[RMDB]
The record gives the reactivity of an RNA of 177 nucleotides to DMS and 2A3.
Reactivities are rounded to 0.1 and cut off at 0 and 3.
Source: RMDB library OK2TRN, as collected in RNAgym.
RNA sequence: GGGAACGACUCGAGUAGAGUCGAAAACAAUGCAAUUCAUGGAACUCUGCUGCAAUUAAGUUCACUUCUUAACACAAACUGCAGGGAUCUGACAGAUGUCUCUAAGAAAGAUCGGAUUCUUGGUGAAGCUAUGGUUCAGGUUCGCCUGAACCAUAGCAAAAGAAACAACAACAACAAC
Reactivity to DMS in 0.01 (KOAc 150mM, MgCl2 10mM, bicine 150mM(pH8.5), 24C), signal-to-noise 1, nucleotides 027 to 126: c020a070a070u010g030c060a100a040u000u000c030a090u010g010g000a060a020c050u000c010u000g030c000u020g000c100a060a080u020u000a060a000g000u000u000c170a060c160u000u010c000u000u000a090a050c120a050c200a050a100a070c060u000g020c000a010g010g000g000a040u000c030u000g010a100c080a060g000a060u000g010u000c020u000c030u000a070a050g000a130a120a020g000a150u000c070g010g020a090u000u000c030u040u000g000g020u000g000a120a070
Reactivity to 2A3 in 0.01 (KOAc 150mM, MgCl2 10mM, bicine 150mM(pH8.5), 24C), signal-to-noise 2, nucleotides 027 to 126: c020a040a090u100g050c010a000a100u100u130c060a130u180g060g000a070a040c020u040c010u020g020c010u010g000c060a040a180u050u050a040a030g020u140u150c100a060c070u030u040c020u050u070a090a020c040a000c010a110a200a140c050u080g000c000a000g030g000g000a020u030c000u030g070a040c020a060g140a050u100g070u010c030u000c010u070a070a070g040a070a100a010g030a170u140c080g000g070a060u050u000c010u010u050g040g010u080g100a070a030
In probing experiments dimethyl sulfate is read out at A N1 and C N3, which are open when not base-paired.